Structure probing data (DMS and 2A3) for a 307-nucleotide construct. Values cover nucleotides 27 to 266. Source: RMDB library POS240, as collected in RNAgym. 2A3 adducts were read by reverse transcription with SuperScript II with manganese. The 2A3 profile rests on 2,900 reads.
RNA sequence: GGGAACGACUCGAGUAGAGUCGAAAACAACAAAAAUUAUGGACUUGGCUUUUGCCUUGAAACAUGAUUGUUAAUCUUACCAAAGACGCCCACCUGGCAUUGCCCGGUGGCAGCUACUCAAGCUGGUUAUUGAGUCAGAUCAGUGACUGUGGAUUUACUGAGGCAUGUUGUGCCAUAACAACAUGUGGUGCCUACACACCACACUGGUUCUAGCUUGAUCUAAAUCAAUAAUGAGGUGAAGGAAGUUCACUGUCAAGAUCGGAAAAAGUCCUACCUUCGGGUAGGACAAAAGAAACAACAACAACAAC
Reactivity to DMS in 0.01 (KOAc 150mM, MgCl2 10mM, bicine 150mM(pH8.5), 24C), signal-to-noise 3, nucleotides 027 to 266: c060a090a110c060a040a110a120a060a030u010u000a030u000g020g000a100c000u000u010g000g010c000u000u050u040u010g030c010c010u000u010g000a100a090a120c060a010u000g000a060u000u010g000u000u000a090a210u000c070u000u000a160c160c110a120a110a090g030a160c300g020c220c000c010a000c000c010u000g000g000c000a230u000u040g040c010c010c080g010g030u000g010g000c010a000g000c020u010a050c030u000c070a010a010g010c010u010g000g020u010u020a040u010u000g000a020g000u000c170a080g000a060u000c000a080g030u000g010a020c000u000g030u030g020g000a050u020u010u000a090c100u000g000a070g000g000c010a040u010g000u000u000g020u000g010c060c060a030u020a030a040c030a010a010c030a010u010g010u000g010g010u010g000c070c040u000a120c210a270c000a020c010c000a050c010a020c180u000g010g010u000u000c150u000a050g020c120u030u010g000a060u020c050u000a030a070a060u000c030a050a050u020a050a100u000g000a150g000g000u000g000a110a040g000g000a060a080g010u000u000c010a000c010u000g000u000c000a090a050g000a030u000c030g010g000a070a100a100a130a150
Reactivity to 2A3 in 0.01 (KOAc 150mM, MgCl2 10mM, bicine 150mM(pH8.5), 24C), signal-to-noise 2, nucleotides 027 to 266: c060a000a000c020a000a170a040a040a040u090u040a010u040g010g000a030c010u020u000g050g010c040u290u220u290u300g000c000c000u000u000g060a120a160a000c020a030u080g080a060u050u100g060u130u090a130a130u080c040u050u060a070c050c030a140a110a040g100a120c090g100c010c020c000a010c000c000u020g030g010c060a290u060u300g010c000c000c050g000g010u000g020g020c000a010g000c010u100a070c000u000c020a010a000g020c010u020g100g030u140u040a050u070u040g020a000g040u030c040a020g010a070u000c000a030g050u000g040a020c000u040g010u060g050g050a050u050u020u120a110c050u040g060a050g100g050c000a000u080g010u000u020g030u010g030c070c000a000u030a020a000c000a010a000c000a000u020g040u020g000g080u060g020c000c030u200a050c080a000c000a000c080c010a010c000a010c000u020g060g040u070u010c030u080a060g010c000u070u160g050a050u070c010u040a010a160a110u030c020a000a030u090a120a020u120g020a000g050g000u020g030a070a000g050g050a010a020g020u040u010c000a010c020u050g040u010c000a010a040g040a060u090c020g000g000a040a020a070a060a000